[RMDB]
RNA sequence: GGGAACGACUCGAGUAGAGUCGAAAAUGCGCGCAGACUGGCGUACUGACGGGCUGUGAGGUGCUUGUCCGCUGGGAACAUCCACAAACGGGAAUUAUCCCACCGGAUCAGUUUAUUCCUCUGGCGGCCGUGUAGAUCCUUUCGAGGAUCUACACGGAAAAGAAACAACAACAACAAC
Reactivity to DMS in 0.01 (KOAc 150mM, MgCl2 10mM, bicine 150mM(pH8.5), 24C), signal-to-noise 2, nucleotides 027 to 126: u000g020c000g000c100g020c040a050g060a080c090u010g010g010c010g010u010a040c130u010g010a120c070g000g000g000c000u000g000u000g010a050g010g020u000g000c020u000u010g010u010c000c020g060c170u020g020g000g010a080a100c200a150u000c000c010a080c050a040a100a200c300g000g020g010a040a090u000u000a170u000c000c000c000a040c190c020g000g010a010u010c140a010g000u010u000u000a140u020u010c010c010u020c020u010g000g010c050g020g000